An RNA of 177 nucleotides, treated with 2A3 and DMS and read out base by base.
As a SHAPE reagent, 2A3 marks flexible, mostly unpaired nucleotides at the ribose 2'-OH.
The RNA was probed in 150 mM KOAc, 10 mM MgCl2 and 150 mM bicine (pH 8.5) at 24 C.
In probing experiments dimethyl sulfate is read out at A N1 and C N3, which are open when not base-paired.
The 2A3 profile rests on 3,166 reads.

RNA sequence: GGGAACGACUCGAGUAGAGUCGAAAAGAUAGAUCACAAGGACCUCGAGCAAUUCAAGAAAGAUGUAUUAGAGAAGAAUGUAGAAACGUUCCUUUAUGUGAAUUCUUCGAACUUAAUUGACAUGCACCUUUAGUACGUUCUUCGGAACGUACUAAAGAAAAGAAACAACAACAACAAC
Reactivity to 2A3 in 0.01 (KOAc 150mM, MgCl2 10mM, bicine 150mM(pH8.5), 24C), signal-to-noise 4, nucleotides 027 to 126: g010a010u180a010g090a050u070c020a020c040a110a040g050g020a030c030c010u010c040g020a020g010c020a060a140u080u070c040a070a060g050a110a130a010g050a080u100g060u090a080u100u140a050g030a010g010a100a020g000a010a030u070g010u120a050g130a090a140a010c020g030u030u010c040c000u060u160u040a090u100g090u020g060a040a020u030u000c000u010u000c010g010a040a010c020u030u140a080a090u140u030g030a030c020a060u060g000c020a070c010
Reactivity to DMS in 0.01 (KOAc 150mM, MgCl2 10mM, bicine 150mM(pH8.5), 24C), signal-to-noise 5, nucleotides 027 to 126: g010a130u010a110g010a090u000c050a070c090a100a140g010g020a110c130c030u000c040g000a070g020c070a070a110u000u000c070a090a060g000a120a080a080g010a070u010g010u000a040u020u010a080g020a210g010a020a040g010a030a000u000g000u000a090g020a040a070a170c060g010u010u000c010c000u000u010u000a050u010g020u020g010a070a040u010u000c020u010u000c030g000a080a070c080u000u000a070a090u010u000g010a060c140a060u000g000c070a080c160